Source: RMDB library OK1LIB, as collected in RNAgym. The record gives the reactivity of an RNA of 177 nucleotides to 2A3. Reactivities are given for positions 27 through 126. The reactions ran in a buffer of 150 mM KOAc, 10 mM MgCl2 and 150 mM bicine (pH 8.5), at 24 C.
[RMDB]
RNA sequence: GGGAACGACUCGAGUAGAGUCGAAAAAAAAGGUAUUUACGAUAGUAAAACAAAUACAACAACGUAUACUUUUACGAAUUAUGUAGAUCAAUACACAAAUGUUAGCGGUAGCUUUGAACAAGUCGCAGGCACUGAUCAAGUUCGCUUGAUCAGUGCCAAAAGAAACAACAACAACAAC
Reactivity to 2A3 in 0.01 (KOAc 150mM, MgCl2 10mM, bicine 150mM(pH8.5), 24C), signal-to-noise 1, nucleotides 027 to 126: a000a000a000a000g010g000u020a000u000u000u000a090c100g000a070u000a000g000u000a000a000a000a000c100a000a300a000u000a000c000a300a000c240a300a070c180g000u000a050u000a050c100u000u000u000u000a150c140g000a240a100u100u120a020u300g220u000a000g000a150u220c000a220a100u000a120c090a000c000a000a000a300u240g000u300u230a170g020c220g000g120u000a000g000c000u080u000u140g150a150a000c070a000a000g160u300c000g000c000a020